[RMDB]
RNA sequence: GGGAACGACUCGAGUAGAGUCGAAAAUAGAACUCAGGCCCUUGGCCACAUCCAGCCUCUGGGCUCCAUCCACUGAGGCGGUUGGCCCGUGCUGACCCACAGGUCAUGGAGUCUCAGGCCUCAGGCCCCAGAAUAAAGGGUUCGCCCUUUAUUCUGGAAAAGAAACAACAACAACAAC
Reactivity to 2A3 in 0.01 (KOAc 150mM, MgCl2 10mM, bicine 150mM(pH8.5), 24C), signal-to-noise 3, nucleotides 027 to 126: u050a000g120a140a020c030u030c140a020g060g000c020c000c000u050u090g010g000c010c030a050c010a130u090c060c030a010g030c020c000u070c070u070g030g000g000c000u010c010c000a010u010c020c010a070c060u040g010a100g150g060c070g040g030u010u010g020g010c000c000c040g170u280g030c010u020g010a070c000c010c000a030c010a020g020g010u080c010a020u010g020g000a030g060u010c030u040c070a040g010g000c000c000u060c020a030g010g010c000c030
Reactivity to DMS in 0.01 (KOAc 150mM, MgCl2 10mM, bicine 150mM(pH8.5), 24C), signal-to-noise 5, nucleotides 027 to 126: u010a120g010a120a130c070u010c060a090g010g010c020c020c050u000u000g020g020c020c060a090c190a060u010c110c080a140g000c020c020u000c070u020g020g000g000c030u010c020c020a030u000c130c160a110c020u000g000a080g020g020c080g020g010u010u000g000g030c000c090c200g010u000g000c020u000g000a060c050c060c020a070c050a030g010g000u000c240a020u000g000g000a060g010u000c030u000c220a070g010g010c020c020u010c130a040g000g000c030c070